[RMDB]
RNA sequence: GGGAACGACUCGAGUAGAGUCGAAAAACUCUGAGCGUAAUCGCGUGUUGACUAGACUAUAGGUGACGUGAGUAUCUAUCCCAUUGUGCAUAGCGAUGGGAUAAUACGCUGAUCUAUAGUCACGGAAUAAGAUCAAGAACUUCGGUUCUUGAUCUUAAAAAGAAACAACAACAACAAC
Reactivity to DMS in 0.01 (KOAc 150mM, MgCl2 10mM, bicine 150mM(pH8.5), 24C), signal-to-noise 4, nucleotides 027 to 126: a060c020u000c060u020g010a090g030c010g010u010a110a150u010c030g000c050g020u000g000u000u000g020a130c110u010a120g010a020c000u000a000u000a030g010g010u010g030a140c140g010u010g000a100g010u000a000u000c230u000a010u000c000c000c000a020u000u000g010u000g010c300a080u010a100g000c000g010a000u000g000g010g010a000u000a000a000u000a010c000g010c030u000g000a040u000c010u000a000u000a000g000u000c010a070c200g020g000a120a120
Reactivity to 2A3 in 0.01 (KOAc 150mM, MgCl2 10mM, bicine 150mM(pH8.5), 24C), signal-to-noise 2, nucleotides 027 to 126: a000c110u120c090u070g070a070g030c030g050u130a260a030u150c050g020c010g040u110g070u130u170g070a090c070u040a020g020a000c020u010a010u000a020g150g020u020g060a010c040g040u030g040a050g000u030a010u000c050u010a000u000c000c000c010a000u010u000g020u010g030c090a110u220a150g020c010g010a010u000g000g000g000a000u000a000a000u010a000c000g020c030u010g020a010u050c000u000a000u000a010g000u010c000a020c030g000g020a060a130
This 177-nucleotide RNA was probed chemically with DMS and 2A3.
2A3 adducts were read by reverse transcription with SuperScript II with manganese.
Values cover nucleotides 27 to 126.